[RMDB]
Structure probing data (2A3 and DMS) for a 177-nucleotide construct. 2A3 adducts were read by reverse transcription with SuperScript II with manganese. High 2A3 reactivity points to a flexible backbone, as in loops and unpaired stretches. The RNA was probed in 150 mM KOAc, 10 mM MgCl2 and 150 mM bicine (pH 8.5) at 24 C.
RNA sequence: GGGAACGACUCGAGUAGAGUCGAAAAGCACUUAGUGGAUGGCCCUGAUAACCAAAAAUUGGCAGAGAAUAUGAUCGUUAAGCACCAUAAUUUUACAAGGGUAAUCAAUCAUAUUGGCAAAUGGAUGCGGAGUAGAUAGUUUCGACUAUCUACUCCGAAAAGAAACAACAACAACAAC
Reactivity to 2A3 in 0.01 (KOAc 150mM, MgCl2 10mM, bicine 150mM(pH8.5), 24C), signal-to-noise 4, nucleotides 027 to 126: g030c010a010c100u140u120a060g030u080g060g080a070u060g040g010c010c010c000u030g100a130u090a150a070c040c020a050a070a010a080a230u140u080g060g000c040a020g040a010g070a250a000u030a030u060g050a050u010c000g040u080u060a100a020g070c030a040c030c010a040u120a270a160u140u220u160u080a070c060a060a060g010g000g000u010a070a030u030c020a020a010u010c010a010u010a020u100u060g090g000c010a010a060a070u120g060g030a050u080g090
Reactivity to DMS in 0.01 (KOAc 150mM, MgCl2 10mM, bicine 150mM(pH8.5), 24C), signal-to-noise 4, nucleotides 027 to 126: g010c040a050c070u000u010a080g040u010g000g010a090u000g010g010c010c020c020u000g020a120u000a100a150c050c020a030a080a060a150a100u010u010g010g020c040a070g000a140g000a070a040u010a020u010g010a030u000c070g030u000u000a040a100g020c150a030c020c020a040u010a030a090u000u000u010u020a100c180a090a180g000g010g010u010a060a040u010c040a040a030u010c030a010u010a060u000u000g000g020c040a030a040a050u000g010g010a170u010g010